[RMDB]
RNA sequence: GGGAACGACUCGAGUAGAGUCGAAAAGCAUAUCCGACGGACUCGGAAUGUCUAUGCGGAAGUCCGUGAAUACAUUAUUGGCUUGAUUGAAAAAUACAUACCUCAAGAGCUUGCUUGGUUACAACCACUAUAGCAGCUGAUUCGUCAGCUGCUAUAGAAAAGAAACAACAACAACAAC
Reactivity to 2A3 in 0.01 (KOAc 150mM, MgCl2 10mM, bicine 150mM(pH8.5), 24C), signal-to-noise 3, nucleotides 027 to 126: g000c010a030u090a120u150c020c020g030a030c030g010g030a030c010u050c050g010g090a090a030u070g090u030c050u130a090u240g080c020g030g070a130a040g030u000c020c010g010u000g020a020a030u190a080c070a060u050u110a070u140u220g040g010c020u030u030g050a070u070u050g060a100a070a040a020a010u130a040c040a030u120a060c000c030u020c000a030a030g010a010g070c030u050u040g010c030u040u050g050g030u110u080a050c020a060a050c020c020a040
Reactivity to DMS in 0.01 (KOAc 150mM, MgCl2 10mM, bicine 150mM(pH8.5), 24C), signal-to-noise 4, nucleotides 027 to 126: g010c050a080u000a060u000c020c010g010a060c050g000g010a140c040u000c040g020g010a240a060u000g010u000c110u000a100u000g010c050g020g000a120a060g010u000c010c020g040u000g000a080a080u000a100c120a080u010u000a110u000u000g010g000c030u000u000g010a090u010u000g010a020a060a090a100a050u000a080c100a060u000a100c090c030u010c070a050a080g000a040g010c030u000u000g010c050u010u000g010g000u000u000a080c150a080a110c030c050a170
This 177-nucleotide RNA was probed chemically with 2A3 and DMS. The 2A3 profile rests on 2,500 reads. As a SHAPE reagent, 2A3 marks flexible, mostly unpaired nucleotides at the ribose 2'-OH. It was measured as part of the RMDB library OK2TST. The RNA was probed in 150 mM KOAc, 10 mM MgCl2 and 150 mM bicine (pH 8.5) at 24 C. For DMS the reverse transcriptase was MarathonRT.